[RMDB]
RNA sequence: GGGAACGACUCGAGUAGAGUCGAAAAGCUAUUUCUGGACAUAAACAAGGUAAAGAUCGAGAUACCUUUACCAUGAUCUCUUCCUGUCCUGAAGGCACUAAUUACAUCAUCAAUCGCAAACUCAUACGGAUACUACUAGUUUCGACUAGUAGUAUCCAAAAGAAACAACAACAACAAC
Reactivity to DMS in 0.01 (KOAc 150mM, MgCl2 10mM, bicine 150mM(pH8.5), 24C), signal-to-noise 4, nucleotides 027 to 126: g030c130u000a080u020u010u020c020u010g000g020a040c060a060u050a090a050a100c110a060a130g020g010u000a010a010a000g010a060u020c170g010a160g010a110u030a080c090c000u000u000u000a000c010c010a070u040g000a120u010c080u000c060u000u000c050c070u000g000u000c010c010u000g010a010a040g000g010c030a110c080u010a070a050u060u030a080c130a080u000c030a030u010c060a030a040u000c060g000c090a080a070a040c040u010c010a070u020a110c240
Reactivity to 2A3 in 0.01 (KOAc 150mM, MgCl2 10mM, bicine 150mM(pH8.5), 24C), signal-to-noise 9, nucleotides 027 to 126: g020c020u080a150u150u070u030c030u030g020g010a010c010a050u270a080a130a030c070a130a130g000g010u020a020a010a010g030a060u130c140g050a020g050a280u220a180c020c000u020u010u000a000c000c000a020u090g090a110u040c060u010c000u150u060c020c020u020g010u010c000c000u020g010a020a020g020g020c020a000c090u060a060a120u180u160a090c060a050u120c010a020u030c030a080a110u080c090g060c170a100a100a070c050u060c080a030u070a200c090